[RMDB]
RNA sequence: GGGAACGACUCGAGUAGAGUCGAAAAGAGGAAGCCACACAGGGGUUUGCAGAGAAAUCACCUCCAGAGGACCCCUUCAGCGAACAGAACGAUCGCUUCACGCGGUGGGAGCAAGACCAUAGCGAUAAUACAGAUUGGUUCGCCAAUCUGAAAAGAAACAACAACAACAAC
Reactivity to 2A3 in 0.01 (KOAc 150mM, MgCl2 10mM, bicine 150mM(pH8.5), 24C), signal-to-noise 9, nucleotides 027 to 129: g070a000g030g040a060a000g020c020c010a040c010a010c040a040g000g010g000g010u030u050u120g050c060a020g020a010g050a070a150a050u150c050a100c040c010u020c010c010a050g030a060g100g030a040c010c000c000c000u040u050c030a020g010c010g010a020a010c020a050g060a070a030c050g040a050u050c020g000c000u080u110c090a060c060g020c020g020g040u040g020g020g000a060g040c060a060a020g030a030c010c010a030u070a030g030c020g050a030u080a120a030u160a110
Reactivity to DMS in 0.01 (KOAc 150mM, MgCl2 10mM, bicine 150mM(pH8.5), 24C), signal-to-noise 9, nucleotides 027 to 129: g010a080g000g000a040a040g020c050c080a080c110a070c120a070g030g010g000g020u010u000u000g010c300a100g010a050g020a060a130a100u080c160a080c090c010u010c020c030a050g000a130g000g000a060c060c010c010c000u010u020c100a080g000c050g000a040a070c040a080g000a080a080c150g020a040u010c050g000c030u040u060c140a070c070g020c050g000g000u000g000g000g000a010g020c090a060a070g010a030c030c000a040u020a030g010c070g010a060u040a050a050u050a120